[RMDB]
RNA sequence: GGGAACGACUCGAGUAGAGUCGAAAAUGCGGUUUCGACCGCAGAGAAGUCCUAAGUCAUGACGAAUCUGCUUUGUCAGCUCGGUAUCGGAAACGAUACGGAGCUUGGAUUUAAGCAGACUAUCAUGAUAUGGAAUUGAAGAUGGUUCGCCAUCUAAUGGAUAGGAUUAUUUCGAUAAUCCUAUCCAAAAAGAAACAACAACAACAAC
Reactivity to 2A3 in 0.01 (KOAc 150mM, MgCl2 10mM, bicine 150mM(pH8.5), 24C), signal-to-noise 5, nucleotides 027 to 156: u050g000c000g010g060u000u070u190c240g130a060c010c000g000c000a000g010a000g020a110a040g120u050c020c010u040a100a060g010u010c010a010u010g010a010c050g080a100a300u010c000u000g010c000u000u010u030g020u020c000a010g020c000u010c040g150g000u000a000u000c010g000g040a060a090a060c010g000a010u010a000c040g180g000a000g000c000u000u070g040g000a020u050u300u140a000a000g000c000a000g000a000c000u010a000u010c000a010u000g020a000u020a030u050g020g050a020a080u170u230g070a120a040g000a010u000g000g030u040u100c220g040c110c000a000u010c010u020a070a080
Reactivity to DMS in 0.01 (KOAc 150mM, MgCl2 10mM, bicine 150mM(pH8.5), 24C), signal-to-noise 4, nucleotides 027 to 156: u000g040c010g010g000u000u000u000c270g020a060c000c000g040c000a010g000a140g010a140a150g010u000c010c010u010a070a300g020u000c010a020u000g010a020c030g010a070a040u000c020u000g010c000u000u000u000g010u000c000a050g010c000u010c000g000g030u000a000u000c000g020g020a190a100a250c000g010a000u000a020c000g010g010a020g010c010u010u010g010g010a050u000u010u000a010a010g010c000a010g020a020c030u000a050u000c000a010u000g030a020u000a300u000g010g010a080a090u010u010g000a080a080g010a040u000g010g020u000u000c150g020c010c010a050u010c010u000a070a300